[RMDB]
RNA sequence: GGGAACGACUCGAGUAGAGUCGAAAAACGCGUCGGCUACGGCCGACACGAAGAUUUGCAUAUAGUGUAGUAUGCAACUAAAAAUAAAGAAAUACACGUCAAGAACAGUCCGGUACGCCGGACUGAAAAAAGGACUCUUUCUUCGGAAAGAGUCCAAUCACAUUAUGGUGUUCGCACCAUAAUGUGAAAAAGAAACAACAACAACAAC
Reactivity to 2A3 in 0.01 (KOAc 150mM, MgCl2 10mM, bicine 150mM(pH8.5), 24C), signal-to-noise 2, nucleotides 027 to 156: a000c010g050c020g000u010c000g010g010c000u040a060c270g080g020c010c000g000a000c000a000c000g010a040a050g060a140u020u020u020g000c010a030u010a000u000a100g010u010g000u010a000g000u000a000u000g000c020a010a000c070u250a060a010a030a070a120u140a030a110a040g050a030a120a000u030a030c000a000c020g070u100c080a100a050g010a160a110c000a000g000u000c000c000g000g010u040a060c260g040c050c020g000g000a000c010u000g020a000a000a000a000a000a000g000g000a000c000u000c010u000u000u010c010u030u070c150g060g000a010a000a010g000a000g000u000c000c000a000a000